[RMDB]
RNA sequence: GGGAACGACUCGAGUAGAGUCGAAAAUCAAGGAGAAGGAACGGUAGAAAAGAGCGAGCCUCUCGAUACGAAAGGGCCGCGAGCCUAUCGAGUUUGGAGUCAUCCGGGCCGAAGGGUUGAGACGCACAUGCUUGGAAGUUCGCUUCCAAGAAAAGAAACAACAACAACAAC
Reactivity to 2A3 in 0.01 (KOAc 150mM, MgCl2 10mM, bicine 150mM(pH8.5), 24C), signal-to-noise 9, nucleotides 027 to 129: u080c010a030a040g050g000a030g020a050a040g040g010a030a040c070g010g050u110a030g090a050a120a030a010g080a010g020c050g010a020g010c010c000u040c010u010c020g050a060u050a190c080g080a110a050a060g010g000g000c020c010g060c050g010a040g010c000c010u070a140u060c020g010a020g000u030u070u090g060g000a010g030u070c010a030u000c020c000g000g000g000c000c010g030a030a040g040g000g000u030u070g020a010g020a030c040g040c010a050c010a090u120g030
Reactivity to DMS in 0.01 (KOAc 150mM, MgCl2 10mM, bicine 150mM(pH8.5), 24C), signal-to-noise 9, nucleotides 027 to 129: u020c070a120a050g020g010a050g020a020a020g020g020a030a040c130g000g030u020a060g000a060a030a070a070g020a140g000c090g000a090g000c050c000u020c000u000c010g030a130u050a120c160g040a040a080a090g010g010g010c000c020g000c030g000a110g030c060c020u000a040u000c040g020a010g010u000u020u020g000g010a040g010u050c090a050u000c020c020g000g000g000c050c030g020a090a100g010g010g040u010u020g020a060g010a050c080g000c130a100c200a010u050g000